[RMDB]
RNA sequence: GGGAACGACUCGAGUAGAGUCGAAAAGCCCAGGCUGGUGUGCACCCCCUCUGGCUGCUUUCAAGGCCUCUUCUCUCUUCUCGGCAGGACAGGCACAGGCAGGUGGCCAGGUGUCAUGCUUAGCUCCUACGAUAUAAGGUUUCGACCUUAUAUCGUAAAAAGAAACAACAACAACAAC
Reactivity to 2A3 in 0.01 (KOAc 150mM, MgCl2 10mM, bicine 150mM(pH8.5), 24C), signal-to-noise 9, nucleotides 027 to 126: g040c000c000c000a000g020g000c010u020g010g030u020g010u020g030c020a040c000c020c000c020c010u050c020u020g080g010c000u010g010c020u060u100u140c100a110a060g080g000c000c000u000c010u020u000c020u000c020u020c020u260u070c090u070c080g050g010c060a010g000g010a020c010a020g010g000c020a010c010a130g080g040c020a010g020g070u060g060g000c010c010a020g000g010u010g020u030c010a020u020g010c010u150u210a010g000c000u040c010c010
Reactivity to DMS in 0.01 (KOAc 150mM, MgCl2 10mM, bicine 150mM(pH8.5), 24C), signal-to-noise 9, nucleotides 027 to 126: g010c010c000c010a130g000g010c020u010g010g020u010g030u000g010c030a140c020c020c030c020c030u010c020u000g010g000c010u000g000c040u000u010u000c090a120a160g010g010c010c010u000c200u000u010c010u000c030u000c040u010u010c150u020c160g000g010c240a030g000g000a040c100a030g000g010c020a060c060a080g010g020c100a050g000g010u000g010g010c030c030a040g010g020u000g000u010c020a030u000g000c030u000u010a050g010c030u000c110c060
Description
The record gives the reactivity of an RNA of 177 nucleotides to 2A3 and DMS. As a SHAPE reagent, 2A3 marks flexible, mostly unpaired nucleotides at the ribose 2'-OH. It was measured as part of the RMDB libraries RFM100 and RFMREP.